[RMDB]
RNA sequence: GGGAACGACUCGAGUAGAGUCGAAAAGAACAGUGAGACACUCUUGCCCCUGCCCAGCAAGGCCAGUGGGACCAAAGUGCUCUCCUUGCGGCUCACAGUUUUGCUGGUGUGUGUUCGAUAUUUUGGGUAUGCGUGCGAUUUUCGAAUCGCACGCAUAAAAAGAAACAACAACAACAAC
Reactivity to DMS in 0.01 (KOAc 150mM, MgCl2 10mM, bicine 150mM(pH8.5), 24C), signal-to-noise 2, nucleotides 027 to 126: g000a080a070c080a080g000u000g010a080g000a070c060a040c060u010c100u010u000g010c020c000c010c000u000g000c070c020c010a060g020c150a070a020g000g030c060c120a120g040u010g010g020g000a120c030c050a060a070a060g020u000g020c130u010c140u000c040c050u000u000g000c140g020g000c000u000c010a020c070a170g000u000u000u000u000g000c000u010g000g010u000g010u000g000u000g020u000u000c070g000a100u000a070u000u000u000u000g000g020g020
Structure probing data (DMS) for a 177-nucleotide construct.
The DMS profile rests on 1,275 reads.
The reactions ran in a buffer of 150 mM KOAc, 10 mM MgCl2 and 150 mM bicine (pH 8.5), at 24 C.
The data come from the RNA Mapping Database (RMDB), library OK2TST.